Conditions: 150 mM KOAc, 10 mM MgCl2 and 150 mM bicine (pH 8.5), 24 C. Chemical mapping of a 170-nucleotide RNA with 2A3 and DMS. For DMS, 57,486 sequencing reads were counted. 2A3 adducts were read by reverse transcription with SuperScript II with manganese. DMS adducts were read by reverse transcription with MarathonRT. Source: RMDB library 15KLIB, as collected in RNAgym.
RNA sequence: GGGAACGACUCGAGUAGAGUCGAAAAGGUUCACACCUCCAACCUGCGGGCCGGCUACUCUUCUUUUCCUUUCCUCGUCAUCCUGGGUCAACCUCUUAAGUUCCUCUUCCUCCUCCUUGCUGAGGUUACAGUGACAUCUUCGGAUGUCACAAAAGAAACAACAACAACAAC
Reactivity to 2A3 in 0.01 (KOAc 150mM, MgCl2 10mM, bicine 150mM(pH8.5), 24C), signal-to-noise 9, nucleotides 027 to 129: g040g000u120u100c050a030c020a030c070c010u040c010c020a070a080c020c020u060g020c030g000g000g020c010c010g020g020c020u060a060c020u020c010u070u060c000u050u060u040u050c000c000u030u030u030c000c000u020c000g060u020c010a080u050c010c030u040g030g000g000u040c030a070a070c010c000u060c000u080u080a090a020g020u040u010c000c000u020c000u050u010c000c010u010c000c000u020c000c000u040u060g030c080u060g050a030g030g030u030u040a060c030a040
Reactivity to DMS in 0.01 (KOAc 150mM, MgCl2 10mM, bicine 150mM(pH8.5), 24C), signal-to-noise 8, nucleotides 027 to 129: g000g000u000u030c130a120c160a160c000c000u040c050c060a090a090c000c000u030g000c060g020g010g040c000c000g040g020c050u030a060c070u030c070u000u000c000u000u020u010u010c000c000u010u000u010c040c010u040c020g000u020c070a090u030c050c060u000g000g000g000u040c050a060a100c050c030u030c020u030u020a120a110g020u000u000c020c010u040c050u000u000c020c010u000c010c010u000c000c000u000u080g030c040u030g000a080g040g000u000u000a080c140a110